[RMDB]
RNA sequence: GGGAACGACUCGAGUAGAGUCGAAAAGAAAGGGACCCCUGCCAGGGGACGCAGCCAGUCGACCCCAGGCAUGUUUUUGCAUGCCGGACUGACCCCUACUGCGGGCAGGAGGGGUGGUCCCGAAAGACCAUACGGACGGAUUCGUCCGUCCGUAUGGAAAAGAAACAACAACAACAAC
Reactivity to DMS in 0.01 (KOAc 150mM, MgCl2 10mM, bicine 150mM(pH8.5), 24C), signal-to-noise 3, nucleotides 027 to 126: g000a100a090a200g010g000g020a060c000c020c300c010u000g000c040c050a160g030g010g010g010a120c100g000c040a040g010c100c280a050g000u000c010g000a150c090c010c000c030a300g000g000c010a000u000g020u000u000u010u000u000g010c000a000u000g000c000c000g010g010a050c020u010g000a090c000c030c000c040u010a120c060u000g000c060g010g000g010c030a010g010g000a080g000g010g000g020u000g000g020u010c000c000c020g000a050a070a120g000a200
Reactivity to 2A3 in 0.01 (KOAc 150mM, MgCl2 10mM, bicine 150mM(pH8.5), 24C), signal-to-noise 1, nucleotides 027 to 126: g010a020a040a040g020g000g000a000c010c010c030c000u020g040c020c010a050g000g000g020g020a000c020g010c010a020g090c110c010a010g020u010c020g080a150c020c000c000c000a010g000g010c000a000u000g020u010u230u090u130u300g020c000a000u000g010c020c000g010g000a000c030u040g040a020c030c020c000c040u060a090c040u150g090c080g070g070g000c000a000g000g020a030g010g010g010g030u000g000g000u000c000c000c000g000a030a000a000g060a030